This 177-nucleotide RNA was probed chemically with 2A3 and DMS. The data come from the RNA Mapping Database (RMDB), libraries RFM100 and RFMREP. As a SHAPE reagent, 2A3 marks flexible, mostly unpaired nucleotides at the ribose 2'-OH.
[RMDB]
RNA sequence: GGGAACGACUCGAGUAGAGUCGAAAAGAAAGAAAUGGCUGCGAAAAGAGUUUUAAUUUUUAUGAGGCCGACGAUGAUUACGGACUCAGGCGACAGGCACAAAUCGGAGAGAAACUAUGUUUGAAAAUAGAGCAAAUAAAUUCGUUUAUUUGCUCUAAAAAGAAACAACAACAACAAC
Reactivity to 2A3 in 0.01 (KOAc 150mM, MgCl2 10mM, bicine 150mM(pH8.5), 24C), signal-to-noise 4, nucleotides 027 to 126: g090a020a090a000g040a010a050a020u070g020g020c020u050g020c070g060a080a010a020a020g080a020g030u090u090u080u120a090a130u060u070u050u040u120a130u110g030a040g010g030c020c010g000a010c030g030a020u170g020a060u080u140a020c010g000g000a000c010u000c020a000g020g020c000g010a030c020a020g040g000c030a030c030a040a070a010u090c030g020g030a040g000a010g000a090a010a020c060u060a120u180g020u030u060u020g130a110a080a030a040
Reactivity to DMS in 0.01 (KOAc 150mM, MgCl2 10mM, bicine 150mM(pH8.5), 24C), signal-to-noise 6, nucleotides 027 to 126: g000a110a090a090g010a080a090a080u010g000g010c010u010g000c060g010a070a060a060a100g000a110g010u000u010u020u020a060a070u040u010u020u010u030a100u040g010a080g000g000c020c000g000a090c100g010a080u040g010a110u010u010a100c050g010g000a040c030u000c020a020g000g010c050g010a040c050a030g000g000c060a040c080a020a080a080u010c060g010g010a070g000a080g000a070a050a090c100u020a050u010g000u000u000u000g010a070a070a070a110